[RMDB]
RNA sequence: GGGAACGACUCGAGUAGAGUCGAAAAAACAGGCAUUGUCACCUGCAGCAAAAGCUUUGAUGUUAACGGUUACUAGGGUUGAGGGUAAGAGUUUUUACACCUCUAAUGGACAGCGCUAUGACUUAUAUGACUAUGACUUGAGUAAGUCGGUUAUGCGUCCUGUGAGACAUUUCGAUGUCUCACAGGAAAAAGAAACAACAACAACAAC
Reactivity to 2A3 in 0.01 (KOAc 150mM, MgCl2 10mM, bicine 150mM(pH8.5), 24C), signal-to-noise 2, nucleotides 027 to 156: a000a000c030a020g000g030c050a050u070u200g020u060c010a020c050c010u070g000c010a030g000c020a020a000a110a110g040c070u190u130u100g040a060u030g060u160u080a060a060c060g010g000u030u040a060c060u040a060g060g020g010u030u080g020a000g020g000g010u030a040a010g070a050g110u000u030u000u000u210a040c080a240c010c010u060c010u100a020a060u030g040g020a020c020a010g000c000g000c070u060a040u090g010a040c010u080u030a040u010a030u300g090a080c010u080a080u210g010a040c040u070u060g020a030g070u160a120a010g010u020c000g020g000u110u070a090u110g020c010g000
Reactivity to DMS in 0.01 (KOAc 150mM, MgCl2 10mM, bicine 150mM(pH8.5), 24C), signal-to-noise 1, nucleotides 027 to 156: a040a090c050a030g000g010c030a060u000u010g070u000c100a060c000c020u000g020c060a040g000c020a010a060a080a090g000c070u000u000u010g000a090u010g000u000u000a110a100c020g000g010u000u000a060c040u000a060g000g000g010u000u000g020a030g030g020g030u000a100a070g000a200g010u000u000u000u010u000a060c020a120c060c000u000c030u010a070a070u000g000g020a070c040a080g040c010g040c040u020a120u000g010a100c050u000u000a020u000a100u000g000a050c050u000a100u040g040a040c020u010u010g000a210g010u000a000a030g020u000c010g040g000u000u000a080u000g010c040g000